[RMDB]
RNA sequence: GGGAACGACUCGAGUAGAGUCGAAAAGACUCUCAUUGAUUAUGAUGACGUGACAAUUCAAGAUAGAAUUUUCUCUUGUUUGUUUGAAGCAUACUCCAAUUCUUUUGGCUUCUACUCCAAAAAUGAGGAAUUUGUUCUUAGGGGUUGCUUAAUGCUCUGUACACCAUAUGUUCGCAUAUGGUGUACAAAAAGAAACAACAACAACAAC
Reactivity to DMS in 0.01 (KOAc 150mM, MgCl2 10mM, bicine 150mM(pH8.5), 24C), signal-to-noise 2, nucleotides 027 to 156: g000a110c060u000c050u010c020a110u000u020g000a160u010u010a070u010g020a070u020g020a080c120g010u000g010a080c020a040a060u010u000c010a060a050g010a120u000a090g050a110a270u010u000u000u000c040u000c010u000u000g010u000u000u000g000u000u000u000g030a030a070g030c030a040u000a040c040u000c030c040a030a080u010u000c070u000u000u000u000g020g010c030u010u000c010u000a030c000u000c010c070a010a050a070a050a110u000g010a070g020g010a040a040u000u000u000g000u000u000c030u010u000a120g030g000g000g000u000u000g000c010u000u010a050a150u000g000c050u000c040
Reactivity to 2A3 in 0.01 (KOAc 150mM, MgCl2 10mM, bicine 150mM(pH8.5), 24C), signal-to-noise 3, nucleotides 027 to 156: g030a010c020u050c020u000c110a070u010u150g110a070u100u180a080u160g050a020u050g030a000c090g080u030g020a000c020a020a030u090u010c000a020a000g030a050u170a120g150a170a210u180u160u300u020c060u020c000u000u050g020u050u040u040g060u010u040u120g070a080a000g030c010a010u060a130c010u080c060c040a060a110u110u070c010u050u010u020u000g030g000c000u170u040c000u040a030c010u000c050c050a030a140a090a100a110u270g040a070g050g060a040a050u150u060u220g020u050u000c000u020u010a020g040g040g000g000u020u010g000c010u000u070a130a020u150g010c010u050c010